[RMDB]
RNA sequence: GGGAACGACUCGAGUAGAGUCGAAAAGAAGGCUUAGUACAAUGCACGCCAGUGAGCCUACCCCCAGCAUAGCUAACUCAGCAGGUCUUGGGUAGGGGUUCAGAUUUUGCAUUUCUAACAAUUUGCCGGGUGAUGCUCAUGAUGCUGGGCCAGGGAACGAAAAUGAGCAUUUCGAUGCUCAUUUUCGAAAAGAAACAACAACAACAAC
Reactivity to DMS in 0.01 (KOAc 150mM, MgCl2 10mM, bicine 150mM(pH8.5), 24C), signal-to-noise 1, nucleotides 027 to 156: g000a240a150g000g000c000u000u000a090g040u010a090c030a030a060u000g030c040a040c060g040c010c050a150g040u010g000a040g040c000c000u000a100c010c030c000c000c010a070g010c000a070u000a100g030c010u000a160a120c110u030c110a110g040c020a110g010g020u000c060u000u000g040g010g070u000a040g020g000g020g020u000u000c040a050g010a220u000u010u000u020g000c050a150u000u000u000c020u000a100a050c090a030a090u000u010u010g020c070c040g000g000g010u000g000a160u010g030c000u000c110a140u000g000a070u000g000c020u000g010g000g010c000c050a110g020g000g000a060a170
Reactivity to 2A3 in 0.01 (KOAc 150mM, MgCl2 10mM, bicine 150mM(pH8.5), 24C), signal-to-noise 3, nucleotides 027 to 156: g150a070a070g010g000c000u040u060a000g030u060a040c050a080a090u090g030c030a000c020g040c010c040a030g070u040g050a020g000c000c000u040a070c050c020c000c000c010a010g000c020a060u100a080g000c010u030a040a080c070u080c200a030g000c010a010g040g030u020c030u060u060g040g000g010u030a050g070g020g010g020u000u030c010a020g050a250u120u130u150u200g000c020a030u010u120u000c040u080a080a080c040a080a060u050u030u020g030c010c030g030g010g000u070g020a240u070g000c020u030c060a150u140g110a090u050g030c000u000g000g000g010c000c030a040g030g010g040a050a050

Chemical mapping of a 207-nucleotide RNA with DMS and 2A3. For 2A3, 1,916 sequencing reads were counted. Reactivities are given for positions 27 through 156. The RNA was probed in 150 mM KOAc, 10 mM MgCl2 and 150 mM bicine (pH 8.5) at 24 C. For DMS, 2,345 sequencing reads were counted.